[RMDB]
RNA sequence: GGGAACGACUCGAGUAGAGUCGAAAAAACACUGACAAGCAGCUAACAUUAAUAGUCGAUGCUCCUCUCACCACAGCUUCUGGAGCCUUGCGCUUAAAAAGCGCCGCUCCCUUAGGAAUUGCCGACAUGCGUAGCUAUCGUUCGCGAUAGCUACGCAAAAAGAAACAACAACAACAAC
Reactivity to DMS in 0.01 (KOAc 150mM, MgCl2 10mM, bicine 150mM(pH8.5), 24C), signal-to-noise 1, nucleotides 027 to 126: a010a000c050a070c070u010g000a080c120a010a120g010c050a070g000c040u000a080a120c090a050u020u010a060a120u010a050g030u000c040g030a080u010g000c080u040c020c010u000c000u000c030a020c000c000a080c180a070g010c000u000u000c020u030g000g010a020g010c040c210u000u030g010c010g040c000u000u010a050a110a020a030a010g000c000g020c000c300g000c000u010c000c010c060u000u020a030g010g020a030a070u000u000g030c030c040g000a060c180a090

An RNA of 177 nucleotides, treated with DMS and read out base by base.
The reactions ran in a buffer of 150 mM KOAc, 10 mM MgCl2 and 150 mM bicine (pH 8.5), at 24 C.
DMS adducts were read by reverse transcription with MarathonRT.